[RMDB]
RNA sequence: GGGAACGACUCGAGUAGAGUCGAAAAGUCCGUUCCUUCGGGAACGGACAAAGGGAAACCAAGCAGUAGGUUCGUGUACCUACAGCAAAUAUAAACACGAAAAAAGCCCUCUGUUCGCAGAGGGCAACCCAAGGAUAUUGUUCGCAAUAUCCUUGGGAAAAGAAACAACAACAACAAC
Reactivity to 2A3 in 0.01 (KOAc 150mM, MgCl2 10mM, bicine 150mM(pH8.5), 24C), signal-to-noise 3, nucleotides 027 to 126: g000u010c010c000g000u010u000c000c010u010u050c210g090g000g000a010a000c010g010g000a000c010a000a020a010g020g010g020a030a040a020c030c010a030a020g090c030a020g000u010a000g010g010u020u020c010g010u020g010u050a070c000c010u000a000c020a010g080c020a000a100a000u180a020u070a110a040a010c020a010c040g000a110a020a030a010a020a020g020c020c010c000u010c000u020g050u050u090c230g010c080a000g000a010g020g010g010c000a000a000
Reactivity to DMS in 0.01 (KOAc 150mM, MgCl2 10mM, bicine 150mM(pH8.5), 24C), signal-to-noise 2, nucleotides 027 to 126: g000u000c000c010g010u000u000c000c000u000u030c260g010g010g010a000a020c020g000g000a000c000a000a050a080g030g030g020a150a030a300c010c010a130a100g030c130a100g050u000a010g000g000u000u000c040g010u000g040u000a040c000c000u000a000c000a090g000c120a020a040a070u010a100u000a070a040a060c070a000c010g020a010a070a080a060a130a090g000c000c000c000u000c000u000g010u000u010c170g000c000a000g020a020g000g030g010c000a000a000